[RMDB]
RNA sequence: GGGAACGACUCGAGUAGAGUCGAAAAGAUAUGGACCAUCGAGCAAUGAUGAUAGCUCCCCACCUCGGAAACGAGAGGCUAUUUGAGCUCGGAUGGUCCUAAGUCAAAAGGUCAGUUCGCUGACCAAGGGAAUCUUAUGGUUCGCCAUAAGAUUCCCAAAAGAAACAACAACAACAAC
Reactivity to 2A3 in 0.01 (KOAc 150mM, MgCl2 10mM, bicine 150mM(pH8.5), 24C), signal-to-noise 1, nucleotides 027 to 126: g010a020u020a040u070g010g000a010c010c020a040u040c000g020a000g070c010a140a300u070g000a000u020g010a000u030a010g030c020u170c100c010c000c050a300c040c020u000c000g000g000a000a000a000c010g000a020g000a020g000g000c000u000a010u010u010u040g010a010g000c010u000c000g130g030a030u000g000g000u010c000c010u010a000a000g000u020c020a080a080a040a000g000g020u000c010a000g030u070u140c250g000c140u000g000a010c000c000a010a030
Reactivity to DMS in 0.01 (KOAc 150mM, MgCl2 10mM, bicine 150mM(pH8.5), 24C), signal-to-noise 1, nucleotides 027 to 126: g000a020u000a050u000g010g010a000c000c000a000u010c000g000a000g040c000a280a090u010g000a120u000g000a020u000a010g010c020u000c070c010c020c040a230c140c030u000c000g000g000a010a000a020c000g000a000g010a300g060g020c000u000a010u000u000u000g000a070g000c000u000c000g000g010a000u000g000g000u000c000c040u000a000a060g000u010c000a070a020a180a180g000g000u000c010a000g020u000u010c190g000c010u000g010a000c000c020a120a040